[RMDB]
RNA sequence: GGGAACGACUCGAGUAGAGUCGAAAACGUGCCGAGGAUGAUGCACCAAACCAUAAGGCCGAACGGGUUGGCGGUCUUCAAGUUGAAAACGUCGCGCUCCCAGUUCACCCAAAACUGACGGCUGAAACCGUACCAUGAACUUCGGUUCAUGGUACGGAAAAGAAACAACAACAACAAC
Reactivity to 2A3 in 0.01 (KOAc 150mM, MgCl2 10mM, bicine 150mM(pH8.5), 24C), signal-to-noise 1, nucleotides 027 to 126: c020g080u060g000c000c040g090a120g110g030a120u130g000a050u130g020c100a000c040c000a080a050a000c060c010a130u140a260a050g040g000c130c000g020a020a000c080g010g000g010u200u070g040g050c000g020g040u020c010u000u030c080a300a220g040u200u080g230a070a010a000a000c060g050u090c010g010c060g010c060u010c020c010c010a000g010u010u040c020a100c000c000c040a020a010a000a010c030u040g030a050c030g030g000c030u070g050a130a000a000
Reactivity to DMS in 0.01 (KOAc 150mM, MgCl2 10mM, bicine 150mM(pH8.5), 24C), signal-to-noise 1, nucleotides 027 to 126: c140g010u020g020c020c020g020a130g030g040a060u020g000a150u000g030c060a070c020c030a060a110a150c070c050a150u010a170a090g010g000c010c000g000a070a050c150g040g030g000u000u000g000g020c040g000g000u010c020u000u020c140a020a060g000u000u000g020a020a020a070a090c060g000u000c000g000c020g000c010u000c060c060c020a020g000u000u000c030a110c020c000c040a060a090a080a020c150u000g000a200c020g010g000c040u000g000a140a050a130